[RMDB]
RNA sequence: GGGAACGACUCGAGUAGAGUCGAAAAGUAUCAGCGGCCGUAGCGCGACGAGAGUAGGAUCGAUCAGCAUCGCUCGAUCCGUGUGGAUCGGAUCGUACGGCGCCUGAGGCCGGCCGUACUAGAGGCCGUAAGACACUGGCUUCGGCCAGUGUCUUACAAAAGAAACAACAACAACAAC
Reactivity to DMS in 0.01 (KOAc 150mM, MgCl2 10mM, bicine 150mM(pH8.5), 24C), signal-to-noise 2, nucleotides 027 to 126: g000u000a080u020c050a060g020c080g010g020c010c000g010u000a060g020c030g030c040g000a130c030g020a040g020a150g020u010a120g000g000a050u010c010g010a030u000c030a140g010c190a120u000c130g030c120u000c040g000a010u000c010c010g040u010g020u010g010g000a140u000c020g010g000a120u000c000g010u000a020c020g020g000c000g010c040c030u000g000a050g010g010c070c050g010g000c010c030g000u000a100c150u000a090g020a170g000g020c000c050
Reactivity to 2A3 in 0.01 (KOAc 150mM, MgCl2 10mM, bicine 150mM(pH8.5), 24C), signal-to-noise 1, nucleotides 027 to 126: g030u050a040u110c020a010g030c040g070g000c000c040g080u100a090g170c010g020c010g090a010c020g030a040g000a030g090u170a120g050g030a000u020c000g020a030u050c040a010g170c060a090u090c080g060c040u000c000g000a000u010c000c020g000u060g020u090g080g100a090u020c010g000g030a020u020c000g000u000a010c030g000g030c040g050c020c000u010g000a030g040g040c000c030g010g000c010c000g070u050a070c040u090a060g070a090g210g000c030c000
The record gives the reactivity of an RNA of 177 nucleotides to DMS and 2A3. As a SHAPE reagent, 2A3 marks flexible, mostly unpaired nucleotides at the ribose 2'-OH. It was measured as part of the RMDB library OK2TRN. Conditions: 150 mM KOAc, 10 mM MgCl2 and 150 mM bicine (pH 8.5), 24 C.